[RMDB]
RNA sequence: GGGAACGACUCGAGUAGAGUCGAAAAUGCAGGGGCAUAUCGCCGCUGGGUGGCACACUAUUCCACAUGAAUGUUGUGGGUCCCUUACCGCUACUGGUGGUAUUGCUCAUCAUGUAUCUGAGUAUUACUACGAAGGUUCAUUCGUGAACCUUCGUAGAAAAGAAACAACAACAACAAC
Reactivity to DMS in 0.01 (KOAc 150mM, MgCl2 10mM, bicine 150mM(pH8.5), 24C), signal-to-noise 2, nucleotides 027 to 126: u030g010c060a030g040g000g000g030c000a050u000a020u010c060g030c010c000g000c210u010g000g000g000u020g000g030c100a040c150a050c120u000a100u010u040c000c120a030c110a030u050g030a090a030u050g000u010u040g030u010g000g010g000u020c020c030c060u000u000a180c040c030g030c090u010a040c110u000g000g060u020g000g000u000a060u030u030g030c030u000c010a050u020c000a160u010g020u030a050u010c040u050g010a140g000u030a130u000u030a180
Reactivity to 2A3 in 0.01 (KOAc 150mM, MgCl2 10mM, bicine 150mM(pH8.5), 24C), signal-to-noise 6, nucleotides 027 to 126: u110g000c060a060g020g020g010g000c010a010u030a010u090c040g010c000c030g020c190u100g020g010g050u040g020g020c020a040c010a020c070u130a150u210u090c050c000a070c040a080u170g150a260a040u240g090u190u050g010u080g010g000g040u070c030c000c020u020u100a090c020c010g030c050u090a060c090u140g000g000u000g020g010u000a030u040u220g000c010u000c020a080u100c100a070u050g070u090a060u030c090u070g060a020g100u110a080u200u080a030